[RMDB]
RNA sequence: GGGAACGACUCGAGUAGAGUCGAAAAGCAACAAGGUGGUGUGGAUGCUGUGCGACGGUUUCUCUGGGCCUGGGCCUGUGGUGUGCCUUUGCUUGCUGGCCUGCCCGUCCCAAGUUGGUAGUGGUUGGCGGGGCUCUUGCGAAGGCUUGGGCCUCUCACCACAAAUGAGGUUCGCCUCAUUUGUGGUAAAAGAAACAACAACAACAAC
Reactivity to 2A3 in 0.01 (KOAc 150mM, MgCl2 10mM, bicine 150mM(pH8.5), 24C), signal-to-noise 1, nucleotides 027 to 156: g040c100a060a110c000a080a000g060g020u050g020g080u050g060u030g030g010a030u080g000c010u010g020u040g000c070g030a010c030g000g050u000u050u010c020u010c030u050g040g000g060c000c060u030g010g050g000c030c010u030g010u020g010g040u060g030u120g000c000c000u010u000u100g070c010u000u120g000c040u090g000g090c000c020u020g030c000c000c000g090u140c010c010c000a020a010g100u110u060g120g030u130a050g030u020g070g010u010u120g000g010c090g020g020g000g000c010u010c020u050u060g020c000g070a070a000g030g040c040u040u050g000g010g010c000c000u000c000u000c010